[RMDB]
RNA sequence: GGGAACGACUCGAGUAGAGUCGAAAAGAUAUGGACGGUGAACUACUCCGUAACACAUCCGACGAUCAGUGCUCUUCGGAAACGAAGAGCACUGGGAGGAUGUGGAGAAGGAGCACCGUCCUAAGUCCAGUUACAUACUGUUCGCAGUAUGUAACUGAAAAGAAACAACAACAACAAC
Reactivity to 2A3 in 0.01 (KOAc 150mM, MgCl2 10mM, bicine 150mM(pH8.5), 24C), signal-to-noise 5, nucleotides 027 to 126: g010a020u050a020u110g020g000a000c000g020g020u010g020a080a040c070u300a100c000u300c000c020g000u020a080a010c000a000c000a010u000c010c090g190a300c040g000a300u010c010a000g000u000g010c000u000c000u010u010c000g010g030a050a020a020c010g000a000a000g000a000g040c000a000c000u000g000g000g000a010g000g000a010u000g010u020g000g010a020g010a010a000g020g000a000g000c000a000c000c000g000u010c000c000u000a000a000g000u000c020
Reactivity to DMS in 0.01 (KOAc 150mM, MgCl2 10mM, bicine 150mM(pH8.5), 24C), signal-to-noise 5, nucleotides 027 to 126: g010a040u000a100u000g000g000a020c000g020g000u000g000a050a040c060u020a300c010u000c000c000g010u010a170a300c000a010c000a010u000c000c000g030a120c300g000a030u000c000a000g010u000g030c010u000c000u000u000c000g010g010a030a010a090c000g020a010a000g010a020g010c000a000c000u000g000g000g000a020g010g000a000u000g010u000g000g000a030g020a130a210g000g000a010g000c000a000c000c000g010u000c000c000u010a000a060g010u000c020
This 177-nucleotide RNA was probed chemically with 2A3 and DMS.
DMS adducts were read by reverse transcription with MarathonRT.
Reactivities are given for positions 27 through 126.
The RNA was probed in 150 mM KOAc, 10 mM MgCl2 and 150 mM bicine (pH 8.5) at 24 C.